The data come from the RNA Mapping Database (RMDB), libraries RFM100 and RFMREP.
The record gives the reactivity of an RNA of 177 nucleotides to DMS and 2A3.

[RMDB]
RNA sequence: GGGAACGACUCGAGUAGAGUCGAAAAAGCCUAUGCUACGGCAUAGGCAACCCGAUGAUUGGAAACGGAGUGAGCUGAGGUGUGAUGACCGACUUCCCGCUGAGGAGCACGUAUUACGAUACGUGCAACAAUAUGUCUACUUCGGUAGACAUAUUGUAAAAGAAACAACAACAACAAC
Reactivity to DMS in 0.01 (KOAc 150mM, MgCl2 10mM, bicine 150mM(pH8.5), 24C), signal-to-noise 9, nucleotides 027 to 126: a090g000c000c000u000a000u000g000c000u000a100c180g030g010c000a010u000a000g010g010c000a010a020c010c000c010g020a090u020g010a100u010u010g010g000a050a080a090c090g000g000a080g010u010g000a070g020c040u010g010a080g000g020u000g010u010g010a080u010g010a090c050c030g000a090c100u000u000c010c000c010g020c140u010g000a120g010g010a140g010c000a010c000g010u000a000u000u010a110c190g010a060u000a000c000g010u000g000c010a070
Reactivity to 2A3 in 0.01 (KOAc 150mM, MgCl2 10mM, bicine 150mM(pH8.5), 24C), signal-to-noise 9, nucleotides 027 to 126: a000g010c010c000u010a000u000g000c000u020a050c260g120g000c010a000u000a000g000g000c000a010a030c000c000c010g040a130u150g020a040u030u200g060g040a060a050a040c060g020g010a040g060u070g030a020g040c030u040g040a030g050g020u040g030u050g060a100u070g060a050c010c020g020a040c010u040u030c010c000c010g040c080u090g050a100g060g080a080g030c000a000c000g000u000a010u020u090a070c220g020a010u000a010c000g000u000g000c000a000